[RMDB]
RNA sequence: GGGAACGACUCGAGUAGAGUCGAAAAGAUAUGGACCAUAGACCUCGAUAAGGAUCCGUCGGAAACGACGGAAUCCUUUUGACGAGGCUAUGGUCCUAAGUCAAAAGUGCAAGCUUCGGCUUGCACACUUAUAACGCCACUUCGGUGGCGUUAUAAGAAAAGAAACAACAACAACAAC
Reactivity to DMS in 0.01 (KOAc 150mM, MgCl2 10mM, bicine 150mM(pH8.5), 24C), signal-to-noise 2, nucleotides 027 to 126: g000a020u000a070u020g000g000a010c000c000a010u000a010g000a260c010c010u000c000g010a130u010a020a010g000g000a030u000c000c000g000u000c010g000g010a020a030a040c000g010a010c010g000g010a010a010u000c000c000u000u000u000u020g010a200c130g010a010g010g010c010u000a000u000g020g000u000c000c000u000a000a040g010u010c000a090a090a120a130g020u000g010c000a010a000g020c000u000u010c270g050g010c000u000u010g000c000a020c000a010
Reactivity to 2A3 in 0.01 (KOAc 150mM, MgCl2 10mM, bicine 150mM(pH8.5), 24C), signal-to-noise 3, nucleotides 027 to 126: g000a000u020a010u040g020g000a010c010c020a020u030a220g300a300c020c010u060c080g210a250u170a300a000g000g000a000u010c020c000g010u000c020g000g000a030a020a000c010g000a000c040g000g000a000a020u020c000c020u000u020u030u090g120a070c010g000a000g020g000c010u000a000u000g000g000u000c000c000u010a010a000g000u000c000a020a020a000a150g000u020g010c010a000a000g000c000u060u280c300g090g020c000u000u040g000c010a000c000a000

Conditions: 150 mM KOAc, 10 mM MgCl2 and 150 mM bicine (pH 8.5), 24 C.
Structure probing data (DMS and 2A3) for a 177-nucleotide construct.
For 2A3, 3,725 sequencing reads were counted.
Values cover nucleotides 27 to 126.
It was measured as part of the RMDB library TTRDES.
DMS adducts were read by reverse transcription with MarathonRT.